[RMDB]
RNA sequence: GGGAACGACUCGAGUAGAGUCGAAAAGAUGGUGAUAUAGCGCGGGUGAGUAUAGAAGUCCUAAGGGAGAUCAGAAUCAAGAACCGUGUUUUGUUCGCUACCGGCAUUGGUGGAAAUCUAUCAGAUCUCGCCCGUUCACGCAUAGCAGGGAUGACCACAACCACUUUACGUUCGCGUAAAGUGGUUGAAAAGAAACAACAACAACAAC
Reactivity to DMS in 0.01 (KOAc 150mM, MgCl2 10mM, bicine 150mM(pH8.5), 24C), signal-to-noise 1, nucleotides 027 to 156: g040a070u000g000g010u000g020a140u000a080u000a110g000c070g030c000g030g020g050u010g000a140g000u000a080u010a070g000a040a150g000u000c020c030u000a150a210g040g020g000a040g000a050u000c090a150g000a110a110u000c000a090a070g020a050a080c040c020g020u010g000u000u000u000u000g040u000u010c010g000c020u020a040c000c060g030g030c080a210u000u020g000g010u000g010g010a040a040a050u000c010u020a090u000c040a120g000a070u000c010u000c030g010c000c010c030g020u000u010c030a060c080g000c050a050u000a050g000c050a000g010g020g020a110u000g000a110c020c040a180
Reactivity to 2A3 in 0.01 (KOAc 150mM, MgCl2 10mM, bicine 150mM(pH8.5), 24C), signal-to-noise 2, nucleotides 027 to 156: g090a040u090g020g000u010g030a050u020a010u060a180g070c060g000c010g030g000g010u030g000a010g020u050a020u040a100g050a070a020g050u030c010c040u060a060a060g030g030g000a110g000a010u110c090a020g090a090a040u090c050a120a060g050a070a080c040c020g020u020g010u100u060u030u070g050u040u060c010g010c040u000a050c000c010g000g070c120a110u080u150g070g020u040g040g060a050a040a000u060c050u060a030u030c010a050g020a160u000c000u000c000g000c000c000c000g010u040u040c040a030c030g080c030a010u050a070g030c030a010g080g000g040a050u080g080a050c000c030a000